Structure probing data (2A3 and DMS) for a 207-nucleotide construct. It was measured as part of the RMDB library OK3TST. Values are in units of 0.01, from 0 to 300, in steps of 10. The reactions ran in a buffer of 150 mM KOAc, 10 mM MgCl2 and 150 mM bicine (pH 8.5), at 24 C. For DMS the reverse transcriptase was MarathonRT.

RNA sequence: GGGAACGACUCGAGUAGAGUCGAAAAGCAUAGGCAAAUAUACUGAGGGUUGAGAUACAGAUAACUUGCCCAAGAUCACAAGCAUCACAGAGGCAUAGCCUAGACUGGAAUGUGGCUCAUUUGACUCCUUAUUUUUGAUCUUUGCUCAAUAGGAGUAACCCGUAAAUAGGUUCGCCUAUUUACGGGUAAAAGAAACAACAACAACAAC
Reactivity to 2A3 in 0.01 (KOAc 150mM, MgCl2 10mM, bicine 150mM(pH8.5), 24C), signal-to-noise 6, nucleotides 027 to 156: g010c030a050u110a060g040g000c020a040a070a010u100a020u040a130c050u070g020a140g080g030g030u100u180g060a040g010a070u130a090c050a010g040a040u090a110a070c060u030u030g000c010c000c000a020a020g030a030u050c020a020c020a130a070g030c030a020u040c030a020c020a050g050a060g050g020c040a070u110a050g010c010c010u050a070g060a110c050u060g020g040a080a040u070g000u050g050g010c010u010c060a060u060u090u150g060a040c010u010c000c010u080u130a140u110u160u030u050u050g050a060u050c020u070u080u120g010c010u020c070a070a140u070a130g030g000a010g000u000a040
Reactivity to DMS in 0.01 (KOAc 150mM, MgCl2 10mM, bicine 150mM(pH8.5), 24C), signal-to-noise 3, nucleotides 027 to 156: g020c030a070u010a050g020g010c010a050a060a120u000a110u000a070c080u000g000a120g050g040g020u000u000g020a130g000a130u000a300c030a080g000a140u020a060a070c030u000u000g000c000c020c030a070a090g020a090u010c050a100c050a070a070g030c050a060u000c030a130c070a130g000a120g020g010c040a060u000a070g000c020c010u000a070g010a210c080u000g030g020a080a090u000g040u000g010g010c030u010c060a110u000u010u010g000a070c010u010c020c010u000u000a210u000u000u000u000u000g000a090u000c050u000u000u000g020c060u000c050a050a090u000a070g020g000a050g030u000a070